Chemical mapping of a 207-nucleotide RNA with 2A3 and DMS. For 2A3, 1,311 sequencing reads were counted. For DMS, 1,434 sequencing reads were counted. The RNA was probed in 150 mM KOAc, 10 mM MgCl2 and 150 mM bicine (pH 8.5) at 24 C. The data come from the RNA Mapping Database (RMDB), library M2RFPK. For 2A3 the reverse transcriptase was SuperScript II with manganese.
RNA sequence: GGGAACGACUCGAGUAGAGUCGAAAACUGCAAAAAGGAACCGAUUCCCACCAAGUUCGGAAAGAGAUACCGGGCGAGGCGCUGAAGAAAGAAUCUCGCUUCAGACACCCCAAGGACUCGACUGAAGAAUGCACGCCAUCGUUCGCGAUGGCGUGAACUAAUGCAUAGACUUCGGUCUAUGCAUUAGAAAAGAAACAACAACAACAAC
Reactivity to 2A3 in 0.01 (KOAc 150mM, MgCl2 10mM, bicine 150mM(pH8.5), 24C), signal-to-noise 3, nucleotides 027 to 156: c020u040g000c050a060a090a040a070a040g080g020a120a010c100c050g070a160u050u000c020c000c000a000c020c040a070a030g050u050u020c010g040g010a090a150a030g040a040g030a020u060a120c010c000g010g000g020c070g050a110g030g060c170g010c080u030g010a040a010g030a080a280a030g070a130a160u060c080u100c240g020c030u010u010c010a040g010a070c020a090c030c040c030c040a050a060g030g000a020c010u000c010g050a050c030u040g000a030a010g080a050a050u120g030c000a020c000g000c010c000a000u000c010g050u080u090c150g020c010g070a000u000g020g030c000g000u000g000a000a000
Reactivity to DMS in 0.01 (KOAc 150mM, MgCl2 10mM, bicine 150mM(pH8.5), 24C), signal-to-noise 1, nucleotides 027 to 156: c070u000g020c000a000a010a130a170a060g000g030a070a250c040c060g000a190u000u010c010c000c060a180c030c100a050a210g030u000u000c030g000g010a100a100a180g010a120g020a170u000a100c060c000g000g000g040c060g000a160g000g010c000g000c020u000g020a010a100g000a020a040a100g030a120a030u000c030u010c000g000c020u000u000c000a020g020a300c020a090c010c000c010c040a050a100g030g000a100c030u000c000g020a150c040u020g020a130a180g010a080a110u000g030c000a090c000g010c000c000a060u000c000g030u030u010c300g030c000g020a010u030g010g010c020g040u000g010a000a090